[RMDB]
RNA sequence: GGGAACGACUCGAGUAGAGUCGAAAAUGAUGUUCGCUGGAAGCGUCUACUGAACGAUGACCGUUGCUUCUACAAAGAUGGCUUUAUGCUUGAUGGGGAACUCAUGGUCAAGGGCGUAGACUUUAACACAGGGUCCGGCCUACUGCGUACCAAAUGGGAGAUAGUCUGUCUUCGGACAGACUAUCUCAAAAGAAACAACAACAACAAC
Reactivity to 2A3 in 0.01 (KOAc 150mM, MgCl2 10mM, bicine 150mM(pH8.5), 24C), signal-to-noise 1, nucleotides 027 to 156: u090g080a030u060g000u120u050c050g010c020u000g000g040a180a040g070c030g060u040c000u050a010c010u150g170a030a030c000g120a140u120g030a020c020c000g000u070u000g000c040u000u020c000u030a160c050a070a160a050g190a060u080g030g000c020u070u300u150a130u270g000c000u030u030g030a010u070g070g010g040g040a050a050c000u020c080a020u070g000g000u000c030a000a040g050g020g020c080g010u000a000g000a000c080u030u050u090a080a000c080a030c010a060g000g000g130u040c040c040g010g010c020c000u070a040c080u050g070c020g060u030a080c000c050a040a020a060u230g070g000
Source information
Conditions: 150 mM KOAc, 10 mM MgCl2 and 150 mM bicine (pH 8.5), 24 C. Structure probing data (2A3) for a 207-nucleotide construct. It was measured as part of the RMDB library OK3TST. The 2A3 profile rests on 419 reads.